This 177-nucleotide RNA was probed chemically with 2A3 and DMS.
The reactions ran in a buffer of 150 mM KOAc, 10 mM MgCl2 and 150 mM bicine (pH 8.5), at 24 C.
The 2A3 profile rests on 2,253 reads.
RNA sequence: GGGAACGACUCGAGUAGAGUCGAAAAGCAUCCGCUACCAGAACCCGGCUGGCGAUGACCACGCCUUGUCCGGCGAUAGCCGCCUGGACGGCUAGCAUGCUAUCGGGAAAGCGGGGUCCGACACUGGAUCCAUCGGUCAUUUCGAUGACCGAUGGAUAAAAGAAACAACAACAACAAC
Reactivity to 2A3 in 0.01 (KOAc 150mM, MgCl2 10mM, bicine 150mM(pH8.5), 24C), signal-to-noise 3, nucleotides 027 to 126: g010c010a070u010c010c010g000c010u090a150c060c050a100g030a080a080c020c000c010g010g030c070u030g010g010c020g090a090u080g060a090c010c020a050c050g000c000c000u030u180g080u050c000c000g020g010c010g010a000u080a030g090c050c010g050c020c040u110g050g110a060c000g000g000c010u020a030g040c020a000u070g020c000u020a020u030c010g010g000g000a160a040a010g020c010g000g020g000g000u030c020c010g060a070c060a020c110u090g060g000
Reactivity to DMS in 0.01 (KOAc 150mM, MgCl2 10mM, bicine 150mM(pH8.5), 24C), signal-to-noise 2, nucleotides 027 to 126: g020c050a090u030c020c020g000c000u000a140c010c030a080g000a230a120c090c000c000g000g020c270u010g000g000c000g020a110u010g000a180c100c080a140c150g000c000c040u020u070g050u020c030c000g000g020c020g000a260u000a130g000c190c010g010c000c000u060g000g020a090c020g000g000c000u020a060g020c110a040u000g000c040u000a040u000c000g010g000g000a050a090a080g000c030g000g000g000g000u000c060c030g000a080c110a050c050u000g010g000
For 2A3 the reverse transcriptase was SuperScript II with manganese.
The data come from the RNA Mapping Database (RMDB), library OK1LIB.